[RMDB]
Description
Chemical mapping of a 177-nucleotide RNA with DMS and 2A3. The RNA was probed in 150 mM KOAc, 10 mM MgCl2 and 150 mM bicine (pH 8.5) at 24 C.
RNA sequence: GGGAACGACUCGAGUAGAGUCGAAAAAUAGUAUGCUCGCAAGGGUGAAAAUUAAAGAAAUUGACGGAGCUACACCACAAGGAGUGGAUUGUGCGGCUUAAUUUGACUCAACGCGAGGAAACUUACCCUACAUAUCACGGUUCGCCGUGAUAUGUAGAAAAGAAACAACAACAACAAC
Reactivity to DMS in 0.01 (KOAc 150mM, MgCl2 10mM, bicine 150mM(pH8.5), 24C), signal-to-noise 4, nucleotides 027 to 126: a100u010a010g010u010a040u040g010c010u000c010g010c020a080a300g000g000g000u000g000a080a020a020a040u000u020a030a040a090g010a050a090a100u030u020g020a130c120g010g020a120g010c020u010a040c030a070c000c000a030c010a150a150g010g020a180g010u000g000g000a080u030u010g020u020g010c030g000g000c030u000u010a020a020u000u000u000g000a020c000u010c000a030a160c220g000c010g000a010g010g010a070a010a020c010u010u000a090c000c020
Reactivity to 2A3 in 0.01 (KOAc 150mM, MgCl2 10mM, bicine 150mM(pH8.5), 24C), signal-to-noise 8, nucleotides 027 to 126: a000u030a010g010u020a020u160g030c000u000c000g030c010a080a160g030g010g010u070g110a120a040a010a030u070u060a040a070a040g150a070a120a060u210u200g060a060c090g070g020a040g010c020u070a020c010a010c010c000a020c030a090a160g280g030a140g100u020g000g040a140u100u200g020u030g050c080g000g000c020u000u000a000a010u030u010u020g040a010c000u000c020a040a020c070g000c000g000a000g010g020a030a010a000c000u000u040a040c000c000